Background:
The record gives the reactivity of an RNA of 177 nucleotides to 2A3 and DMS. For DMS, 1,041 sequencing reads were counted. Reactivities are rounded to 0.1 and cut off at 0 and 3. 2A3 adducts were read by reverse transcription with SuperScript II with manganese.
[RMDB]
RNA sequence: GGGAACGACUCGAGUAGAGUCGAAAAGAUAUGGAUCCAGUGGGUACCGAGGAGGUCGGAAACGACACUCUGUUUGACGUACCGUAACAUCUGGAUCCUAAGUCAAACCCCAUGUUCGCAUGGGGAAGUUGGAGGAUUGGUUCGCCAAUCCUCCAACAAAAGAAACAACAACAACAAC
Reactivity to 2A3 in 0.01 (KOAc 150mM, MgCl2 10mM, bicine 150mM(pH8.5), 24C), signal-to-noise 2, nucleotides 027 to 126: g010a010u060a070u150g040g010a040u010c000c010a000g000u040g070g000g070u010a020c030c030g000a040g030g000a000g000g000u000c020g020g020a060a080a040c020g020a000c140a260c300u000c040u030g170u130u170u300g060a000c070g000u000a000c000c000g050u020a050a050c030a200u150c000u000g000g030a010u010c000c000u010a070a000g020u000c040a080a020a300c000c040c020c000a000u010g010u060u080c300g040c210a000u010g020g000g000g000a000a020
Reactivity to DMS in 0.01 (KOAc 150mM, MgCl2 10mM, bicine 150mM(pH8.5), 24C), signal-to-noise 1, nucleotides 027 to 126: g000a080u010a300u020g000g000a000u000c010c010a000g050u000g010g000g020u000a010c020c000g000a070g000g020a010g030g000u000c000g010g000a070a130a170c010g000a000c000a140c000u000c000u000g000u000u020u020g000a070c300g000u010a000c020c000g000u020a030a060c190a030u000c020u000g000g000a010u010c010c000u010a000a090g000u000c010a050a070a220c010c000c000c000a050u000g000u000u010c290g050c020a030u000g020g000g000g000a010a020